This 177-nucleotide RNA was probed chemically with DMS and 2A3. Values are in units of 0.01, from 0 to 300, in steps of 10. The RNA was probed in 150 mM KOAc, 10 mM MgCl2 and 150 mM bicine (pH 8.5) at 24 C.
[RMDB]
RNA sequence: GGGAACGACUCGAGUAGAGUCGAAAACAAAUCGGUACAUUUGGACUCGGUUCGGUUAUUUCGGUUCGACACGCAGAAAAGGCAAAACUCAACGGUCGCGUCGAUACCAUUUUUGGAAAUUAUCGAAGAAUUAUCAGCGAUUCGUCGCUGAUAAUUCAAAAGAAACAACAACAACAAC
Reactivity to DMS in 0.01 (KOAc 150mM, MgCl2 10mM, bicine 150mM(pH8.5), 24C), signal-to-noise 2, nucleotides 027 to 126: c040a010a030a060u010c070g010g030u010a050c080a180u010u000u000g000g020a120c030u000c030g020g040u000u010c030g030g000u010u000a040u010u000u000c040g010g030u010u000c010g030a030c030a030c040g010c000a210g000a100a100a050a110g000g000c010a090a120a110a130c050u020c020a070a260c100g000g000u000c020g010c060g010u000c010g000a030u000a010c020c000a170u000u000u000u000u000g000g000a070a010a100u000u000a020u000c010g010a090a110
Reactivity to 2A3 in 0.01 (KOAc 150mM, MgCl2 10mM, bicine 150mM(pH8.5), 24C), signal-to-noise 2, nucleotides 027 to 126: c000a010a030a040u110c050g090g040u060a040c020a110u020u070u180g080g030a020c030u030c070g030g030u070u010c010g030g000u040u050a040u050u020u040c070g000g000u000u000c020g010a010c010a020c050g000c010a000g140a090a130a040a010g160g000c110a030a090a090a180c080u060c060a080a080c010g050g140u210c000g020c030g000u010c010g000a010u100a090c020c030a040u110u130u020u140u090g110g010a050a080a040u070u060a010u050c020g040a060a020